[RMDB]
RNA sequence: GGGAACGACUCGAGUAGAGUCGAAAAUGGAUAACAGAAUGUGCGAACAGGGAAUGCCCCGUUUUGUGAUGGUUAUAUCGAUAUCCGGCUGGGGCGUUUUAUUUGCAGUUCAAGCGUCUGGAAUAUCCCUGUAGUUACCGUUCGCGGUAACUACAGGAAAAGAAACAACAACAACAAC
Reactivity to DMS in 0.01 (KOAc 150mM, MgCl2 10mM, bicine 150mM(pH8.5), 24C), signal-to-noise 2, nucleotides 027 to 126: u020g020g010a050u000a040a140c030a040g000a070a020u000g020u000g000c300g000a030a000c050a130g000g000g000a040a020u000g010c030c000c000c010g000u010u010u000u010g040u010g000a030u000g030g020u000u000a150u020a090u000c080g000a070u010a010u000c030c020g010g000c030u010g070g030g000g010c020g040u000u000u000u010a050u010u010u010g030c140a120g000u010u010c040a040a300g010c050g010u000c000u000g020g000a100a090u010a030u000c050
Reactivity to 2A3 in 0.01 (KOAc 150mM, MgCl2 10mM, bicine 150mM(pH8.5), 24C), signal-to-noise 1, nucleotides 027 to 126: u040g050g000a010u000a070a000c000a020g070a200a130u180g050u090g030c010g000a020a000c000a010g000g000g080a000a030u030g020c030c010c010c020g010u020u050u140u100g190u080g020a070u030g070g100u210u110a160u010a040u300c030g090a000u030a000u240c000c000g050g000c100u230g010g020g010g000c000g000u000u000u000u020a120u060u190u230g060c070a050g000u000u010c030a030a010g020c000g040u000c010u000g000g040a010a060u070a030u070c000
The record gives the reactivity of an RNA of 177 nucleotides to DMS and 2A3. 2A3 adducts were read by reverse transcription with SuperScript II with manganese. DMS adducts were read by reverse transcription with MarathonRT.